An RNA of 207 nucleotides, treated with DMS and 2A3 and read out base by base. For 2A3, 696 sequencing reads were counted. The RNA was probed in 150 mM KOAc, 10 mM MgCl2 and 150 mM bicine (pH 8.5) at 24 C. For DMS the reverse transcriptase was MarathonRT.
[RMDB]
RNA sequence: GGGAACGACUCGAGUAGAGUCGAAAAGUCAAUCUAUAAUAGAUAGUAGCUAUAAUAUAUUCUAUGAUGGUAUUGAAGAAGAUGACAAUCUUGGCAUAUUGAUCAUUUAACACAGACAUGGUAUCAACAGAUAGCUUGAAUGAAAGAGAAUCAGUAACUUGAAUCCCAUAUUCGUAUGGGAUUCAAGAAAAGAAACAACAACAACAAC
Reactivity to DMS in 0.01 (KOAc 150mM, MgCl2 10mM, bicine 150mM(pH8.5), 24C), signal-to-noise 1, nucleotides 027 to 156: g000u000c010a030a060u000c050u000a040u020a070a050u040a070g000a080u030a300g000u000a080g010c030u000a110u000a090a200u000a130u000a190u010u000c040u000a020u000g000a060u000g000g020u010a010u010u000g010a080a190g000a050a060g010a040u010g000a040c070a050a160u000c070u000u030g030g030c070a100u000a060u000u000g000a070u010c060a080u010u010u000a120a090c090a040c060a140g000a120c070a090u000g030g020u000a060u000c030a030a080c040a080g000a190u000a060g010c050u000u020g000a030a050u020g000a080a070a170g000a130g030a070a100u000c080a010g000u010a060a140
Reactivity to 2A3 in 0.01 (KOAc 150mM, MgCl2 10mM, bicine 150mM(pH8.5), 24C), signal-to-noise 2, nucleotides 027 to 156: g030u000c030a030a130u000c010u130a140u080a300a140u120a130g050a040u000a060g020u010a000g010c010u070a070u110a300a220u250a070u010a150u300u000c040u050a060u070g030a020u050g010g000u110a030u140u070g030a020a020g000a020a010g010a020u020g020a000c030a010a040u050c030u060u040g000g000c030a040u040a050u040u100g070a150u000c000a000u000u070u050a090a000c140a000c000a000g040a090c000a000u020g030g010u040a010u040c010a000a030c010a040g070a050u020a030g080c020u030u080g060a070a050u090g010a070a030a020g040a000g010a020a030u060c050a010g070u010a060a000